[RMDB]
RNA sequence: GGGAACGACUCGAGUAGAGUCGAAAAGAUUUCGGCCGUAUCGCCGCGACCAACGCCAUCAGCGAUAUCUACGCCAUGGGCGGCGACCCGCUGAUGGCCAUCGCCAUCCUCGGCUGGCCGGUCAACAGUCGAUACCGAGUUUCGACUCGGUAUCGACAAAAGAAACAACAACAACAAC
Reactivity to DMS in 0.01 (KOAc 150mM, MgCl2 10mM, bicine 150mM(pH8.5), 24C), signal-to-noise 2, nucleotides 027 to 126: g000a090u000u000u010c040g050g000c000c060g010u000a040u000c130g020c010c000g000c290g000a100c030c090a130a120c230g010c000c000a020u000c020a040g000c000g000a030u000a140u000c020u000a150c020g010c000c000a120u000g020g020g090c010g000g000c200g000a060c300c080c000g000c010u000g000a060u000g010g000c000c040a010u000c040g060c030c020a110u010c010c030u000c030g010g010c030u020g000g000c040c000g000g000u010c050a080a080c230a080
Reactivity to 2A3 in 0.01 (KOAc 150mM, MgCl2 10mM, bicine 150mM(pH8.5), 24C), signal-to-noise 1, nucleotides 027 to 126: g080a080u120u080u240c030g000g000c010c010g090u120a100u150c070g030c000c020g000c040g000a000c030c080a090a050c000g000c000c000a000u000c000a010g020c000g000a020u010a080u190c040u100a090c000g010c040c020a170u300g080g080g030c080g030g010c030g000a050c040c010c000g000c000u000g000a000u010g010g000c000c020a000u000c020g010c020c020a060u000c030c010u040c010g010g010c030u040g020g000c010c040g000g000u030c000a030a030c010a080
Chemical mapping of a 177-nucleotide RNA with DMS and 2A3. The 2A3 profile rests on 1,625 reads. Values cover nucleotides 27 to 126. Source: RMDB library OK2TST, as collected in RNAgym. Conditions: 150 mM KOAc, 10 mM MgCl2 and 150 mM bicine (pH 8.5), 24 C. DMS adducts were read by reverse transcription with MarathonRT.